[RMDB]
RNA sequence: GGGAACGACUCGAGUAGAGUCGAAAAGAUAUGGAACGGGCACAUAGUGCCCUAUCGGAAACGAUAGAAGGCAGUGUGCCGUUCCUAAGUCAAAACGACAAUUAACGCUUCGGCGUUAAUUGUCGAACACUCCUGUAGUCUUCGGACUACAGGAGUGAAAAGAAACAACAACAACAAC
Reactivity to DMS in 0.01 (KOAc 150mM, MgCl2 10mM, bicine 150mM(pH8.5), 24C), signal-to-noise 2, nucleotides 027 to 126: g000a050u010a300u010g000g000a000a010c000g040g030g020c000a000c010a060u030a070g020u000g020c000c020c010u000a000u000c000g010g000a100a050a180c000g000a010u000a010g000a080a070g020g000c000a050g040u010g010u000g000c000c000g020u020u000c010c010u000a040a110g000u000c070a110a060a130a230c020g000a020c030a000a000u000u000a000a000c010g030c000u010u030c290g030g000c000g000u000u010a000a010u000u000g020u000c000g000a050a140
Reactivity to 2A3 in 0.01 (KOAc 150mM, MgCl2 10mM, bicine 150mM(pH8.5), 24C), signal-to-noise 2, nucleotides 027 to 126: g010a010u020a030u140g020g000a020a020c070g070g300g030c020a000c020a070u300a140g300u110g020c000c010c020u000a000u000c010g000g020a070a030a000c000g000a000u020a000g130a180a210g050g000c050a050g030u020g000u030g170c000c000g000u020u000c000c000u020a050a000g030u000c020a040a020a080a190c020g000a000c000a000a000u010u010a000a000c010g010c000u070u120c300g220g010c000g000u000u000a000a000u000u010g000u000c000g000a000a000